[RMDB]
RNA sequence: GGGAACGACUCGAGUAGAGUCGAAAACCGCUGGGCGAUAGAUCCUGCAAGCGGCAUGCCCCCAAGCUCGACCGUGCCGUCCCGAUGGGAGGUUACGCCCGCCAGAACGCGCAGAAGUUGCCCCUUGCGACCACUGACCGUUCGCGGUCAGUGGUCGAAAAGAAACAACAACAACAAC
Reactivity to 2A3 in 0.01 (KOAc 150mM, MgCl2 10mM, bicine 150mM(pH8.5), 24C), signal-to-noise 1, nucleotides 027 to 126: c000c000g100c110u110g000g060g000c000g070a130u030a240g130a060u070c000c000u050g060c130a070a090g020c010g010g000c020a000u120g030c020c000c000c000c110a130a000g020c000u000c000g000a100c020c040g000u020g000c000c030g210u120c130c020c000g150a170u210g000g020g000a130g020g020u010u020a020c110g010c030c100c040g000c000c020a000g000a020a000c000g000c050g000c000a000g050a090a050g060u060u040g060c030c000c000c050u100u160g000